Structure probing data (2A3) for a 207-nucleotide construct. The RNA was probed in 150 mM KOAc, 10 mM MgCl2 and 150 mM bicine (pH 8.5) at 24 C.
RNA sequence: GGGAACGACUCGAGUAGAGUCGAAAAAUCUUUAAGCAGAUGGCAGGUUCACCCCGUACGGUGCGGAAGUUCGCGCUUCCGUGAAACGCGAAAAUCGGACGGUGGCUGCAAGUCGCAUCGCAAAACAUAUAGCUUGUUAGGUUCGCCUAACAAGCAAGUAAUCGUCCUAGUUCGCUAGGACGAUUACAAAAGAAACAACAACAACAAC
Reactivity to 2A3 in 0.01 (KOAc 150mM, MgCl2 10mM, bicine 150mM(pH8.5), 24C), signal-to-noise 2, nucleotides 027 to 156: a000u130c080u060u200u020a160a020g020c080a060g000a050u050g060g010c030a040g110g000u250u190c030a040c000c000c000c000g010u040a040c040g000g020u060g020c000g000g010a010a010g000u050u200c040g040c020g000c140u000u000c010c010g010u050g010a140a030a000c140g000c000g080a070a000a000a050u070c000g000g070a020c040g010g040u080g020g000c020u000g000c070a030a080g060u050c050g020c030a020u030c030g010c020a020a020a080a010c030a040u140a030u050a150g000c000u000u000g010u000u000a020g030g020u020u040c170g040c050c000u000a000a000c000a000a000g010c000a020a000
Annotation:
It was measured as part of the RMDB library M2RFPK.